[RMDB]
RNA sequence: GGGAACGACUCGAGUAGAGUCGAAAACAUUUCAUCCAGCACCAAGACCUGACCCUUGUGUUUAUUUGUCAGCAUCAGCCCUUUACUGCUAUUAUUCAGAUGAAUGUCAUCAAUGUGUUAUAGCAGUUGGUAAUUGUACUAAUCGUACUGUUACCUAGUAGUGUGUAACGUUCGCGUUACACACUACAAAAGAAACAACAACAACAAC
Reactivity to DMS in 0.01 (KOAc 150mM, MgCl2 10mM, bicine 150mM(pH8.5), 24C), signal-to-noise 3, nucleotides 027 to 156: c040a140u010u000u010c040a140u010c020c040a120g000c020a110c060c020a080a140g000a080c060c010u010g040a120c080c020c040u000u020g020u010g010u010u000u010a120u030u000u020g020u020c020a090g010c040a070u000c060a120g010c040c040c030u000u000u010a070c000u000g010c000u000a010u000u010a090u010u010c040a130g010a100u000g010a110a150u010g020u000c070a110u010c030a090a120u000g010u000g050u000u000a040u000a020g020c000a030g030u000u000g020g010u000a020a020u000u010g020u010a010c010u000a100a180u000c300g020u000a010c000u010g030u010u000a010c010c010u030a180
Reactivity to 2A3 in 0.01 (KOAc 150mM, MgCl2 10mM, bicine 150mM(pH8.5), 24C), signal-to-noise 8, nucleotides 027 to 156: c060a060u120u190u180c040a090u040c040c020a010g030c020a030c050c030a090a030g050a090c010c040u040g060a090c020c030c020u060u060g050u030g060u120u110u070a200u030u120u100g070u050c030a010g040c000a080u060c040a050g060c010c010c000u070u130u080a020c010u000g010c010u020a010u050u010a020u020u050c010a040g030a120u020g090a240a160u260g180u200c010a010u000c010a060a190u100g020u010g010u040u010a010u010a000g000c000a010g000u010u020g010g000u010a010a010u000u030g000u000a000c010u080a110a220u140c090g000u000a000c000u020g000u010u000a000c000c000u010a020

Chemical mapping of a 207-nucleotide RNA with DMS and 2A3. For 2A3 the reverse transcriptase was SuperScript II with manganese.